[RMDB]
RNA sequence: GGGAACGACUCGAGUAGAGUCGAAAAGGCUUUCCACAGCGCAGCCAAGGUCGGGCCCUCAAACCACGCCUGACCCAAGAAACUUUCGAGGGCACGUUCAAUGCCGCCAGGACCUGGUGAGCCACCACGAGGGUAGGUAGUUCGCUACCUACCCUCGAAAAGAAACAACAACAACAAC
Reactivity to 2A3 in 0.01 (KOAc 150mM, MgCl2 10mM, bicine 150mM(pH8.5), 24C), signal-to-noise 3, nucleotides 027 to 126: g060g040c030u010u050u020c000c000a030c010a010g000c020g000c050a020g000c010c080a060a060g020g020u030c010g030g000g000c000c020c000u050c040a090a110a060c060c030a030c070g010c000c000u030g030a090c000c000c000a020a030g060a050a090a050c060u130u160u140c070g010a020g000g000g010c050a000c010g000u040u070c120a170a100u160g050c010c000g010c010c000a030g010g100a110c030c040u090g000g030u040g000a050g020c000c020a040c030c020a050
Reactivity to DMS in 0.01 (KOAc 150mM, MgCl2 10mM, bicine 150mM(pH8.5), 24C), signal-to-noise 1, nucleotides 027 to 126: g000g000c040u020u000u000c000c000a180c120a100g000c040g110c000a050g040c000c070a130a270g000g000u000c000g010g060g000c000c020c020u000c000a070a010a060c070c130a080c130g000c000c040u050g000a110c190c000c060a100a000g000a000a110a180c060u020u000u000c080g040a240g150g040g000c000a080c010g150u000u100c040a100a010u050g000c000c010g050c000c100a250g070g000a170c300c120u000g000g080u000g000a050g000c040c000a020c000c000a060